[RMDB]
RNA sequence: GGGAACGACUCGAGUAGAGUCGAAAAUGACGGGUUGCAGGGUGUAGUUUAGGGAGCUACAACUGCCAUCAUCCUUCAAAAGUGGGGCCACACUGUUUAGAAGUUCUCUAACAUGUAAGUUUUCCCGCACUAAGUCCUGCAGGAGACGUGACCCUCCUCUGAAGAUAGCGUUCGCGCUAUCUUCAGAAAAAGAAACAACAACAACAAC
Reactivity to 2A3 in 0.01 (KOAc 150mM, MgCl2 10mM, bicine 150mM(pH8.5), 24C), signal-to-noise 3, nucleotides 027 to 156: u130g030a010c070g000g010g020u040u030g010c020a000g010g080g050u040g030u010a020g010u020u050u120a090g000g040g010a030g000c010u030a010c010a040a000c020u030g000c050c010a020u040c000a020u010c000c000u020u080c040a050a080a030a080g030u040g010g020g010g020c050c000a050c020a010c060u060g030u160u090u090a040g000a130a050g050u210u080c020u000c000u030a020a000c000a010u100g000u070a010a100g010u040u000u080u030c010c000c010g000c000a030c030u070a010a090g010u020c020c010u030g020c000a010g010g000a030g000a010c090g060u030g040a050c000c000c000u030c010c030
This 207-nucleotide RNA was probed chemically with 2A3. For 2A3 the reverse transcriptase was SuperScript II with manganese. Conditions: 150 mM KOAc, 10 mM MgCl2 and 150 mM bicine (pH 8.5), 24 C. Reactivities are rounded to 0.1 and cut off at 0 and 3.